[RMDB]
RNA sequence: GGGAACGACUCGAGUAGAGUCGAAAAAAAAAAAACGCUGGGCUUAGAACACAUGUCGGCGACUAUGAAGUACUGAAGCGCGCACGGUAUGGAGUCGCGACAUGUUCCCUAAGCCUGUGCUGAAGCGCGCACGGCAACCGAAAGGUGCGAAAAAAAAUCAUACAUGUAUCUUCGGAUACAUGUAUGAAAAAGAAACAACAACAACAAC
Reactivity to 2A3 in 0.01 (KOAc 150mM, MgCl2 10mM, bicine 150mM(pH8.5), 24C), signal-to-noise 1, nucleotides 027 to 156: a000a030a000a000a000a030a090a030c080g000c030u030g020g000g000c000u020u000a030g170a300a020c010a000c000a000u010g000u010c010g110g250c000g020a020c000u100a180u300g000a010a000g000u000a000c010u040g050a190a100g000c010g020c000g020c020a020c030g090g020u010a000u010g010g020a000g000u000c000g000c010g010a000c000a010u000g010u000u000c010c000c000u000a000a010g010c000c000u010g020u000g000c010u010g020a150a070g000c000g000c010g000c020a000c020g020g000c030a030a030c000c010g010a070a080a070g020g010u000g030c000g000a090a010a000a030a020a000a010a060